[RMDB]
RNA sequence: GGGAACGACUCGAGUAGAGUCGAAAAUGAUUGGCCCGGGUAUGAUCGGCCUGUUCACCAACCCGUAUGUCGCAAUUAUGCUGCUGUGUAUCGGUGGUUUUGCCCACCAGGCACUGUCUGGCGCGCACCGUAGUGCCCUGUUCGCAGGGCACUACGGAAAAGAAACAACAACAACAAC
Reactivity to DMS in 0.01 (KOAc 150mM, MgCl2 10mM, bicine 150mM(pH8.5), 24C), signal-to-noise 1, nucleotides 027 to 126: u010g020a130u000u010g000g030c060c030c040g010g000g050u020a110u020g000a090u020c060g000g000c050c020u000g000u030u020c050a050c070c040a110a110c050c000c020g020u000a090u010g020u030c060g040c040a080a080u010u010a080u000g020c000u010g010c000u010g020u000g000u000a090u010c130g030g000u000g000g010u000u000u010u000g020c100c010c010a050c010c020a060g010g000c020a050c090u010g020u020c010u010g060g010c010g030c110g020c050a150
Reactivity to 2A3 in 0.01 (KOAc 150mM, MgCl2 10mM, bicine 150mM(pH8.5), 24C), signal-to-noise 2, nucleotides 027 to 126: u060g020a000u000u040g040g030c090c120c190g020g000g020u300a230u240g110a160u140c030g000g000c010c080u030g040u020u020c050a020c070c000a040a100c010c000c000g020u080a080u100g080u130c060g000c010a060a100u150u030a120u300g010c020u010g000c000u020g000u030g000u110a130u300c090g000g000u020g030g070u030u070u300u190g070c010c000c010a000c000c020a050g070g060c000a000c080u090g020u000c050u000g070g020c010g000c000g050c010a050

Source information:
Structure probing data (DMS and 2A3) for a 177-nucleotide construct. The 2A3 profile rests on 1,072 reads. 2A3 adducts were read by reverse transcription with SuperScript II with manganese. The data come from the RNA Mapping Database (RMDB), library OK2TST.